[RMDB]
RNA sequence: GGGAACGACUCGAGUAGAGUCGAAAAACUUUAUAUGUGUCCACUCAUUUAGUCCUCCCAAUAUCACUAUGAGGUUAUUACAAUUACUGUUAUAUGUAUUUCACAGUUAAGGAAACGGAGGCGCAGACAGCUAAAGACAUUUGCUGAAGGUUAGAAAUCAUUAUAUCGUAUUCGUACGAUAUAAUGAAAAAGAAACAACAACAACAAC
Reactivity to 2A3 in 0.01 (KOAc 150mM, MgCl2 10mM, bicine 150mM(pH8.5), 24C), signal-to-noise 3, nucleotides 027 to 156: a000c150u210u270u040a240u070a070u200g030u020g070u070c020c010a070c020u060c050a070u130u150u200a060g050u100c030c020u020c010c050c000a050a030u050a030u130c070a050c040u050a120u110g070a070g070g020u060u050a010u040u040a050c050a010a030u070u030a010c020u000g040u070u030a130u040a020u180g110u060a190u070u080u050c010a010c000a010g000u020u100a050a010g060g030a020a000a000c000g010g000a020g010g010c000g000c000a010g030a120c010a000g030c020u090a080a030a000g050a070c020a100u060u100u080g000c000u010g030a060a030g000g000u050u070a070g020a050a100a020
Reactivity to DMS in 0.01 (KOAc 150mM, MgCl2 10mM, bicine 150mM(pH8.5), 24C), signal-to-noise 2, nucleotides 027 to 156: a100c040u030u010u000a140u000a110u010g000u000g000u000c040c040a100c050u020c050a130u010u020u000a090g020u000c000c030u000c010c010c020a050a150u000a120u000c110a060c030u000a050u000g010a040g020g010u000u010a040u000u020a030c030a050a080u000u010a130c170u000g000u000u010a090u020a040u000g010u000a020u020u000u000c030a050c040a060g000u000u000a060a140g010g000a090a110a110c070g000g030a020g020g010c110g070c090a080g030a100c090a110g000c040u010a030a050a090g020a070c050a100u010u000u000g040c010u000g010a070a090g000g000u000u010a060g020a070a150a140